[RMDB]
RNA sequence: GGGAACGACUCGAGUAGAGUCGAAAACGUAUGAACUUGUCCCUGCUGGUCUGCAGGUUAAAAUAUCUUCUAAUGGCCUGGACUGUACCGCCAUAUUCCCUCCUGGCGGGGCGCCGAGCGCUGCACCGAGCGAUGAAUUUUUCGAAAUUCAUCGCUCAAAAGAAACAACAACAACAAC
Reactivity to DMS in 0.01 (KOAc 150mM, MgCl2 10mM, bicine 150mM(pH8.5), 24C), signal-to-noise 2, nucleotides 027 to 126: c120g000u000a070u020g000a080a070c100u000u000g010u010c110c000c000u010g020c020u000g010g010u010c140u010g000c000a010g020g010u000u000a060a060a110a090u010a030u050c140u000u010c050u030a070a120u010g000g010c020c020u020g010g000a090c090u030g000u000a100c050c020g020c010c010a030u000a150u000u000c010c000c020u010c130c110u000g020g000c000g010g000g000g040c040g020c050c090g000a080g030c070g030c020u010g030c110a070c140c100
Reactivity to 2A3 in 0.01 (KOAc 150mM, MgCl2 10mM, bicine 150mM(pH8.5), 24C), signal-to-noise 1, nucleotides 027 to 126: c010g060u210a100u230g060a120a070c070u080u080g020u080c010c000c010u000g000c030u050g010g210u080c030u060g060c000a000g000g000u040u060a010a070a030a030u180a090u010c090u090u000c020u080a100a100u140g020g000c000c000u030g080g020a060c010u110g060u140a020c000c030g060c010c000a050u050a120u110u060c000c000c000u000c010c050u030g000g000c050g000g000g010g000c010g000c000c070g020a060g000c070g000c040u030g030c020a060c010c070